[RMDB]
RNA sequence: GGGAACGACUCGAGUAGAGUCGAAAAUGGGCGCCCGGCGUGGAGGCGCUGACCCACACGCUGCUUUCCACCGCCGUUAACAACAUGAUGCUGCGGGACCGCUGGAGCCUGGUGGCCGAGCGGCGGCCCACGAGCAUGAGUUCGCUCAUGCUCGUGGAAAAGAAACAACAACAACAAC
Reactivity to 2A3 in 0.01 (KOAc 150mM, MgCl2 10mM, bicine 150mM(pH8.5), 24C), signal-to-noise 3, nucleotides 027 to 126: u130g070g020g000c040g010c010c000c010g020g000c040g040u080g030g050a060g000g020c050g000c050u030g080a090c010c020c000a020c000a000c040g040c010u120g010c000u180u110u030c010c030a030c040c000g000c010c000g040u040u140a070a030c060a000a020c050a200u260g040a070u150g050c030u040g030c030g030g030g090a130c010c030g020c070u070g060g020a090g050c000c000u040g120g050u140g020g000c010c010g020a020g000c020g000g010c000g010g000c000
Reactivity to DMS in 0.01 (KOAc 150mM, MgCl2 10mM, bicine 150mM(pH8.5), 24C), signal-to-noise 2, nucleotides 027 to 126: u010g000g020g000c010g000c210c130c010g000g010c050g070u040g000g010a050g000g000c020g000c050u000g000a070c090c030c060a160c080a050c150g010c040u000g030c010u010u030u000c010c040a020c070c000g010c020c030g030u010u060a030a140c240a110a140c210a090u040g010a090u020g020c000u020g000c120g020g000g010a140c020c040g000c010u040g010g000a130g020c030c000u000g000g010u040g020g030c040c020g000a130g020c020g000g020c020g000g020c130
This 177-nucleotide RNA was probed chemically with 2A3 and DMS. It was measured as part of the RMDB library OK1LIB. The reactions ran in a buffer of 150 mM KOAc, 10 mM MgCl2 and 150 mM bicine (pH 8.5), at 24 C. For 2A3 the reverse transcriptase was SuperScript II with manganese. Reactivities are given for positions 27 through 126.